[RMDB]
RNA sequence: GGGAACGACUCGAGUAGAGUCGAAAACACUAGCUUUAGAAGCUGUAACUGACUUAAGGAGCUGUACCACUUACAGCAAUGUAAGUGACAUACCUAGCUGAGUCAGUGAUACCUAGCAGAGCUAGAAGAUAAAGUAGAGUUUCGACUUUACUUUAUCAAAAGAAACAACAACAACAAC
Reactivity to 2A3 in 0.01 (KOAc 150mM, MgCl2 10mM, bicine 150mM(pH8.5), 24C), signal-to-noise 9, nucleotides 027 to 126: c040a000c000u000a000g010c000u070u080u070a140g070a250a020g030c020u020g010u030a060a030c000u000g020a000c000u030u030a100a100g150g010a050g100c030u020g020u030a050c140c040a000c000u000u000a000c000a030g020c050a040a120u020g000u000a000a000g000u000g010a000c010a020u060a020c000c080u050a030g050c020u020g010a000g000u000c000a000g000u000g000a010u040a070c020c060u030a010g000c010a010g000a000g000c000u000a010g030a060a020
Reactivity to DMS in 0.01 (KOAc 150mM, MgCl2 10mM, bicine 150mM(pH8.5), 24C), signal-to-noise 9, nucleotides 027 to 126: c080a300c000u000a000g010c000u000u000u010a140g010a130a070g000c090u010g020u010a160a030c000u000g000a010c000u010u010a080a110g010g010a080g010c090u000g010u010a070c200c000a010c000u000u000a000c000a010g000c290a070a060u000g000u000a000a000g010u000g010a080c130a150u010a050c100c100u010a060g000c070u000g000a010g000u000c000a000g000u000g000a110u040a050c260c070u010a040g020c090a100g010a010g000c000u000a000g000a090a080
An RNA of 177 nucleotides, treated with 2A3 and DMS and read out base by base. High DMS reactivity at an A or C suggests that its Watson-Crick edge is free. The 2A3 profile rests on 97,238 reads.